[RMDB]
RNA sequence: GGGAACGACUCGAGUAGAGUCGAAAAGCUCCACAGGCUGGUGAGUGGGCCCGUCUUCUCCCUGACCGAUAGAGUCGUGGGUGUAGACGAAGAUGCUGUGCUGCUUCAUCAGCGAGGCCAUACGCACAAGAACUAGGGAAUUCGUUCCCUAGUUCUUAAAAGAAACAACAACAACAAC
Reactivity to DMS in 0.01 (KOAc 150mM, MgCl2 10mM, bicine 150mM(pH8.5), 24C), signal-to-noise 7, nucleotides 027 to 126: g010c090u010c020c040a110c160a120g010g010c010u000g010g020u000g010a050g020u000g010g020g020c020c070c010g000u000c000u000u010c020u000c000c000c000u000g000a010c000c020g020a200u020a150g010a140g020u000c010g000u010g020g010g010u000g020u000a050g000a050c110g000a080a080g000a080u000g010c120u010g000u010g000c020u000g010c030u000u000c030a020u000c030a020g000c020g010a090g010g000c050c080a090u010a090c130g010c090a100c170
Reactivity to 2A3 in 0.01 (KOAc 150mM, MgCl2 10mM, bicine 150mM(pH8.5), 24C), signal-to-noise 5, nucleotides 027 to 126: g020c040u040c040c010a070c040a060g230g030c000u020g000g000u010g010a020g010u070g010g030g030c030c000c000g000u000c000u040u010c020u010c010c000c000u010g000a010c000c030g150a200u160a230g140a050g030u040c100g150u060g010g010g010u060g060u090a060g020a050c060g000a020a030g050a030u140g000c110u110g060u120g050c030u010g010c000u090u120c020a030u000c000a010g010c010g000a030g020g000c030c020a090u110a150c090g020c060a050c020
An RNA of 177 nucleotides, treated with DMS and 2A3 and read out base by base. The RNA was probed in 150 mM KOAc, 10 mM MgCl2 and 150 mM bicine (pH 8.5) at 24 C.